[RMDB]
RNA sequence: GGGAACGACUCGAGUAGAGUCGAAAAGCUAUCAACCGGUUCGAAUCAGCACACCGCCGCUGGAGCAGGCCAUCACCGCGUGCAACCAUGAGGAAGCAUUUGCGUUCACCUUUGAUGACCGUGGGCAUCAGGUGUACUACCUGACCUUCCCCGAUGGCUAUUAACACACUUUCGAGUGUGUUAAUAGAAAAGAAACAACAACAACAAC
Reactivity to DMS in 0.01 (KOAc 150mM, MgCl2 10mM, bicine 150mM(pH8.5), 24C), signal-to-noise 4, nucleotides 027 to 156: g000c030u000a080u000c020a090a090c020c020g010g000u000u010c050g010a110a110u000c040a110g010c060a110c070a150c010c010g030c020c040g030c050u000g020g010a170g010c040a090g030g020c020c030a080u000c020a060c060c010g050c080g030u000g010c030a070a160c000c020a060u000g020a160g020g020a070a240g020c050a110u000u000u010g020c040g020u000u000c030a060c020c010u000u010u010g030a050u000g000a020c010c030g020u000g040g010g010c200a060u000c000a010g010g020u010g000u010a080c070u000a040c020c020u020g010a070c060c030u000u000c010c000c000c020g010a070u000g000g010
Reactivity to 2A3 in 0.01 (KOAc 150mM, MgCl2 10mM, bicine 150mM(pH8.5), 24C), signal-to-noise 9, nucleotides 027 to 156: g010c010u030a030u150c050a050a080c030c030g030g010u080u080c070g090a060a100u120c060a040g060c050a020c010a020c060c040g040c030c020g070c070u050g030g010a020g030c050a030g000g040c010c010a020u060c020a010c030c030g040c040g020u050g020c040a050a050c010c010a080u150g060a070g120g050a050a010g020c030a070u050u060u250g050c040g010u030u030c030a060c010c000u040u110u160g030a030u030g040a050c020c060g090u150g040g080g010c010a020u020c000a010g000g000u010g010u030a110c040u040a010c000c010u020g050a060c000c010u010u050c010c000c000c010g060a040u100g050g010